[RMDB]
RNA sequence: GGGAACGACUCGAGUAGAGUCGAAAAUACCUGGGAACAUUGGGGUGUUCAAAAAGCAAAACAGGGUUAAGGUUUUUGUUAGGGGAAGGAAGGAGAAAGCCUGAGGGAAGCAGGAGGAGAGAGCUGGGAGAAGGUUCUGGAGUGAAAGUCUUGCCAGCAGAGAAAGAUCAUUCGUGAUCUUUCUCUGAAAAGAAACAACAACAACAAC
Reactivity to 2A3 in 0.01 (KOAc 150mM, MgCl2 10mM, bicine 150mM(pH8.5), 24C), signal-to-noise 1, nucleotides 027 to 156: u090a030c000c000u030g000g000g040a010a010c000a090u010u070g020g010g000g010u040g040u020u030c040a100a060a050a000a000g050c050a050a030a000a050c030a040g090g010g030u070u080a070a020g050g020u010u030u050u080u100g120u110u070a080g010g010g020g040a040a040g000g000a010a010g000g020a020g040a000a080a000g020c000c010u000g010a050g040g000g010a020a010g000c040a000g050g010a020g020g010a020g010a000g000a020g000c060u080g000g020g000a080g020a050a000g000g000u150u080c020u040g010g000a030g020u080g020a070a030a030g000u020c000u010u010g050c060c030a050g000
Structure probing data (2A3) for a 207-nucleotide construct. 2A3 adducts were read by reverse transcription with SuperScript II with manganese. Reactivities are given for positions 27 through 156. For 2A3, 733 sequencing reads were counted.